This 177-nucleotide RNA was probed chemically with 2A3 and DMS. For DMS, 25,723 sequencing reads were counted. 2A3 adducts were read by reverse transcription with SuperScript II with manganese.

RNA sequence: GGGAACGACUCGAGUAGAGUCGAAAAUUCAAGCCACGUCACCGAAGGCUGCGCGUUCAUGGUGCGGGCGGCGUCGAGGGCGCUGGUGCCCGCGCUGUCCCGCGCUUGUAGGUCGGCGCCUCGCUCCAAUUAUUUGAGGUUUCGACCUCAAAUAAUUAAAAGAAACAACAACAACAAC
Reactivity to 2A3 in 0.01 (KOAc 150mM, MgCl2 10mM, bicine 150mM(pH8.5), 24C), signal-to-noise 5, nucleotides 027 to 126: u070u020c040a040a020g050c030c020a060c040g070u060c040a030c080c030g060a100a030g040g000c060u100g010c160g010c010g040u080u050c040a050u170g020g000u030g000c000g000g020g010c010g000g000c010g010u080c090g120a140g010g030g000c050g020c210u170g230g120u220g010c000c000c000g000c000g010c000u020g050u200c000c010c000g000c000g000c000u010u040g010u060a040g020g050u040c040g020g000c000g020c000c010u010c010g020c020u010c020c030
Reactivity to DMS in 0.01 (KOAc 150mM, MgCl2 10mM, bicine 150mM(pH8.5), 24C), signal-to-noise 8, nucleotides 027 to 126: u000u010c100a100a120g010c020c030a080c100g010u000c050a080c090c030g000a110a080g010g010c030u010g020c060g010c050g010u000u000c070a080u010g010g010u000g010c010g010g010g020c010g000g010c000g010u000c150g010a140g010g000g010c010g010c220u010g010g020u010g010c000c000c010g000c000g010c000u000g000u010c000c010c000g010c000g010c010u000u000g020u000a070g010g000u010c040g010g010c040g000c020c020u010c050g000c060u000c060c080